This 207-nucleotide RNA was probed chemically with DMS and 2A3.
For DMS, 4,569 sequencing reads were counted.
For DMS the reverse transcriptase was MarathonRT.
RNA sequence: GGGAACGACUCGAGUAGAGUCGAAAACAUAUACCACUUAAUGACAAAAUCAACUACAUAAUCCUCAUCUGGAACAUUUAGUUCAUCGCUUUCUAGAAUAAGUUUCAUAGAUAGAUAAUCAAAAUUGUCUAUGAUGUCAUCUUCCAGUUCCAAAAAGACUAGUGUAAGUAUUCGUACUUACACUAGUAAAAGAAACAACAACAACAAC
Reactivity to DMS in 0.01 (KOAc 150mM, MgCl2 10mM, bicine 150mM(pH8.5), 24C), signal-to-noise 3, nucleotides 027 to 156: c060a140u000a100u010a240c040c020a080c090u000u000a080a110u050g020a200c030a070a120a140a300u010c060a060a080c050u000a080c100a100u000a110a110u000c020c020u000c080a060u020c060u010g020g020a070a050c040a110u000u010u000a150g030u000u000c090a070u000c060g030c050u000u000u000c020u000a100g000a080a060u010a060a080g000u000u000u000c020a020u000a020g010a030u000a010g010a070u000a070a110u000c110a100a060a080a180u000u000g030u010c000u000a000u000g030a080u000g000u000c050a060u000c090u010u000c000c010a080g000u000u000c030c020a040a060a090a090a120g000
Reactivity to 2A3 in 0.01 (KOAc 150mM, MgCl2 10mM, bicine 150mM(pH8.5), 24C), signal-to-noise 8, nucleotides 027 to 156: c020a010u220a020u080a130c020c030a070c050u110u180a120a050u130g060a050c050a040a120a040a100u120c030a070a080c050u150a060c050a100u140a090a100u080c020c030u050c040a120u040c080u070g020g010a030a010c010a030u100u160u130a060g010u040u060c030a050u080c080g020c070u070u110u060c050u090a030g040a130a070u080a160a020g030u020u060u000c010a000u010a010g010a000u010a020g070a040u080a100a070u160c060a030a050a090a130u080u020g000u000c000u010a010u010g010a020u030g040u030c010a050u010c040u060u020c020c010a040g000u070u020c030c010a030a130a030a010a010g070